[RMDB]
RNA sequence: GGGAACGACUCGAGUAGAGUCGAAAAAAUGUUCUGUUCGCAGAACAUUAAGCUGGUGUCCCGACCAGGCUGGAUGUCAGUACACGAAGUGCCAGAUCGCGAAUGCCUCCGGCUUCGGCCGGAGGAACGUGUAAUGUUAAUUCGUUAACAUUACACGAAAAGAAACAACAACAACAAC
Reactivity to 2A3 in 0.01 (KOAc 150mM, MgCl2 10mM, bicine 150mM(pH8.5), 24C), signal-to-noise 9, nucleotides 027 to 126: a000a000u010g000u010u000c010u010g030u030u050c250g020c060a000g000a010a000c000a000u010u010a050a010g050c020u010g000g030u030g020u020c010c000c000g010a020c010c010a020g050g010c030u040g020g030a090u100g050u170c040a030g060u130a050c070a010c120g110a150a020g030u020g090c010c010a040g030a120u110c060g010c040g160a100a030u120g050c000c000u000c000c000g000g000c000u020u070c190g110g000c000c000g000g000a000g000g000a000a000
Reactivity to DMS in 0.01 (KOAc 150mM, MgCl2 10mM, bicine 150mM(pH8.5), 24C), signal-to-noise 9, nucleotides 027 to 126: a020a000u000g010u000u000c000u000g010u010u010c190g020c010a020g000a010a010c000a000u000u000a060a130g020c040u000g000g010u000g000u000c000c010c010g000a100c030c020a030g010g010c050u000g010g010a070u010g000u000c040a070g010u000a070c100a070c080g010a080a080g010u000g000c030c040a080g000a090u000c090g020c090g000a100a090u000g000c000c000u000c000c010g010g000c010u000u010c190g030g010c000c000g000g010a010g000g000a010a010

This 177-nucleotide RNA was probed chemically with 2A3 and DMS. The 2A3 profile rests on 30,565 reads. The DMS profile rests on 22,749 reads.